[RMDB]
RNA sequence: GGGAACGACUCGAGUAGAGUCGAAAAGGUCCUCUGAAUGGAGUGCUCUACUGAGAUUAUAAAAUAGAAGGUAAGCUAUUAUCUCUUACAACAGGGCAGGGCUUGUUGGAAUAGGCGGUAAAGUCUAAAAACUACCUCACCUUCGGGUGAGGUAGAAGGUAUCAUAUACGUUCGCGUAUAUGAUACCAAAAGAAACAACAACAACAAC
Reactivity to 2A3 in 0.01 (KOAc 150mM, MgCl2 10mM, bicine 150mM(pH8.5), 24C), signal-to-noise 4, nucleotides 027 to 156: g040g020u050c010c010u020c040u060g190a120a090u190g010g040a030g040u070g020c020u030c020u060a070c050u030g010a010g000a060u090u130a080u220a160a110a080a040u100a030g070a100a020g140g020u130a030a030g020c010u010a040u090u030a050u070c020u000c010u060u090a040c010a100a030c010a070g000g030g000c020a000g030g010g020c030u020u020g020u030u020g010g000a080a080u030a040g010g000c040g040g020u170a110a050a020g020u010c050u070a040a040a040a020a040c000u000a000c010c000u000c000a000c000c010u020u050c220g060g000g000u000g000a000g000g000u000a000g000a000a000
Reactivity to DMS in 0.01 (KOAc 150mM, MgCl2 10mM, bicine 150mM(pH8.5), 24C), signal-to-noise 1, nucleotides 027 to 156: g000g000u000c000c000u000c010u030g030a110a140u010g000g000a100g030u000g010c060u000c000u000a100c070u000g000a130g000a120u000u010a140u000a040a060a110a110u000a070g000a100a130g010g000u000a040a160g030c060u000a090u000u000a040u010c020u000c010u000u000a150c030a040a080c070a110g000g010g020c050a110g010g000g020c010u000u040g000u000u010g020g020a070a050u000a100g000g030c040g000g010u000a050a060a090g010u020c080u010a050a030a040a050a120c000u000a010c000c000u020c000a030c000c000u000u000c300g060g020g030u000g010a020g010g000u010a010g010a000a040
Conditions: 150 mM KOAc, 10 mM MgCl2 and 150 mM bicine (pH 8.5), 24 C. This 207-nucleotide RNA was probed chemically with 2A3 and DMS. As a SHAPE reagent, 2A3 marks flexible, mostly unpaired nucleotides at the ribose 2'-OH. For DMS the reverse transcriptase was MarathonRT.